[RMDB]
RNA sequence: GGGAACGACUCGAGUAGAGUCGAAAAUUGUGGAAAGCCACAAACUCGUUUCGCUAUGAAUUCGGAAGUAGCUCGCAUAACAGUGAGAACGAUGCGGCUUUUUUGCUUCAGAUAGGAUGUCACAUAUGAAUAUUGAGUUGACUGACCGCCCACGGCGUAUUCCAAUCGAAUUCGUUCGAUUGGAAUAAAAAGAAACAACAACAACAAC
Reactivity to DMS in 0.01 (KOAc 150mM, MgCl2 10mM, bicine 150mM(pH8.5), 24C), signal-to-noise 3, nucleotides 027 to 156: u010u010g010u000g000g000a090a120a120g020c020c020a030c060a060a090a060c040u010c030g000u000u010u000c030g010c100u000a070u000g010a080a100u000u020c090g000g020a080a150g010u000a060g020c010u000c020g040c010a030u000a030a180c080a110g010u000g000a190g010a090a080c050g000a040u010g010c010g020g010c000u000u000u000u000u000u000g020c020u000u000c020a100g010a180u010a100g010g020a110u000g030u000c010a010c030a080u000a080u000g000a060a070u000a070u000u010g020a100g020u000u000g020a100c040u000g010a180c030c000g000c290c010c010a070c100g020g000c130g000
Reactivity to 2A3 in 0.01 (KOAc 150mM, MgCl2 10mM, bicine 150mM(pH8.5), 24C), signal-to-noise 5, nucleotides 027 to 156: u040u010g010u010g020g060a300a140a060g160c030c000a010c010a020a060a080c060u030c030g010u010u060u020c030g000c070u040a060u150g040a090a070u170u090c040g050g000a050a000g020u060a020g010c100u190c110g000c030a050u060a160a150c030a080g070u050g060a090g030a080a000c030g000a010u020g010c010g020g000c000u100u040u010u030u110u100g020c010u010u020c020a050g010a130u080a090g050g020a050u090g060u060c020a010c010a080u110a060u150g120a170a030u140a100u230u210g030a050g060u020u000g030a030c000u030g040a060c010c000g030c020c040c010a040c050g050g000c020g000